[RMDB]
RNA sequence: GGGAACGACUCGAGUAGAGUCGAAAACGAGGGGUGGGCGAAAGUUGCCAUGAGACCGUAACUUUCGUAGUCAUUGAUAAAGGGGCAGGUCUCGAUCUUUUGUCAUUGCGGUUGCCUAGAGGCAUGGAAAACCAUGACAGGUUCGCCUGUCAUGGAACAUUAAUAUGCUGUUCGCAGCAUAUUAAUGAAAAGAAACAACAACAACAAC
Reactivity to DMS in 0.01 (KOAc 150mM, MgCl2 10mM, bicine 150mM(pH8.5), 24C), signal-to-noise 2, nucleotides 027 to 156: c080g010a100g000g000g000g010u000g000g000g020c020g000a010a010a030g010u010u000g000c000c010a100u000g020a070g010a050c030c020g030u020a070a040c030u000u000u010c030g020u000a140g000u000c100a130u000u010g030a140u000a030a030a080g000g000g030g050c120a050g050g000u010c010u010c010g010a080u000c050u000u000u000u010g020u000c020a160u000u000g010c020g000g030u010u020g020c000c020u010a130g010a080g010g020c050a060u000g030g000a080a030a070a070c000c040a010u000g000a010c000a020g020g020u000u010c300g020c030c000u000g030u000c000a000u000g000g010a010a040
Reactivity to 2A3 in 0.01 (KOAc 150mM, MgCl2 10mM, bicine 150mM(pH8.5), 24C), signal-to-noise 6, nucleotides 027 to 156: c070g020a110g020g040g000g120u280g010g010g000c020g010a000a010a010g010u010u020g010c040c060a180u100g030a000g000a010c000c010g010u020a010a010c000u030u010u010c030g010u020a030g050u040c060a090u050u230g080a080u110a110a090a030g010g000g030g010c080a030g020g000u000c010u000c010g030a110u050c040u020u160u100u110g090u090c060a090u050u160g030c050g070g000u050u060g020c010c010u080a080g040a110g060g010c020a020u040g010g040a020a100a010a010c000c010a000u000g000a000c000a000g020g000u050u050c110g060c050c000u000g000u010c000a000u000g000g000a000a000
An RNA of 207 nucleotides, treated with DMS and 2A3 and read out base by base. For 2A3, 6,292 sequencing reads were counted. High 2A3 reactivity points to a flexible backbone, as in loops and unpaired stretches. The RNA was probed in 150 mM KOAc, 10 mM MgCl2 and 150 mM bicine (pH 8.5) at 24 C.